[RMDB]
RNA sequence: GGGAACGACUCGAGUAGAGUCGAAAAAAAGAUAUGGAGACGCGUAAAGGCUGAUGACCUAUGGCGUAGUAUGUCGGAAACGACAUAUCAAGCCAUAGCAAGGCCUUUGAUCGUCUCCUAAGUCAAACCUUGAAGAGGACUUCGGUCCUCUUCAAGGAAAAGAAACAACAACAACAAC
Reactivity to DMS in 0.01 (KOAc 150mM, MgCl2 10mM, bicine 150mM(pH8.5), 24C), signal-to-noise 1, nucleotides 027 to 126: a010a060a070g010a080u000a300u000g020g020a060g040a000c020g000c140g000u000a030a020a040g000g000c020u010g010a040u000g000a110c300c000u010a000u000g030g000c000g030u010a300g010u000a020u000g000u000c000g000g010a190a020a150c000g030a000c000a000u000a000u000c030a300a300g000c010c000a000u000a000g010c000a110a060g000g020c000c000u000u000u000g000a070u000c020g000u000c000u010c000c020u010a000a080g020u000c060a210a140a090